[RMDB]
RNA sequence: GGGAACGACUCGAGUAGAGUCGAAAACGCACUCGCAGCUUAAUAACCUGCGCUGAGCCCUUCUCCCCCAGCUUGCCUGUGUCCUAGGGAAUUGGAAGGUCAUCCUUAACAGGAUCGUGUGGAAGUCAUUACUCGUGAGUGUUCGCACUCACGAGAACCAAUGUGUUGUGUUCGCACAACACAUUGGAAAAGAAACAACAACAACAAC
Reactivity to DMS in 0.01 (KOAc 150mM, MgCl2 10mM, bicine 150mM(pH8.5), 24C), signal-to-noise 3, nucleotides 027 to 156: c040g000c020a110c050u000c030g010c020a040g030c030u000u000a170a170u010a190a150c200c000u010g010c000g030c140u010g030a080g010c030c020c010u000u000c010u010c030c000c000c000c030a100g000c020u000u000g020c040c020u020g040u000g030u000c040c020u020a120g030g010g010a070a070u010u000g020g020a050a020g000g000u010c070a090u000c020c020u000u000a130a140c130a120g010g010a000u000c080g010u000g020u000g000g000a100a230g010u000c060a080u000u000a140c010u010c000g000u000g010a050g030u000g000u010u010c300g000c010a020c000u000c000a020c010g000a010g010a020a120
Reactivity to 2A3 in 0.01 (KOAc 150mM, MgCl2 10mM, bicine 150mM(pH8.5), 24C), signal-to-noise 3, nucleotides 027 to 156: c030g020c010a030c020u020c010g000c010a010g000c010u010u070a060a020u020a050a030c000c010u010g030c000g030c150u070g030a050g020c000c020c000u100u020c070u060c010c000c030c000c000a010g010c000u040u120g030c000c000u030g010u030g030u110c010c010u020a060g000g020g040a060a060u090u090g050g000a050a040g010g030u090c030a030u000c010c010u060u050a070a020c010a050g010g010a010u040c070g010u040g010u020g100g000a030a010g010u040c040a050u090u110a060c000u000c000g010u000g010a000g000u020g060u030u070c140g030c030a000c000u010c000a000c000g000a000g010a000a000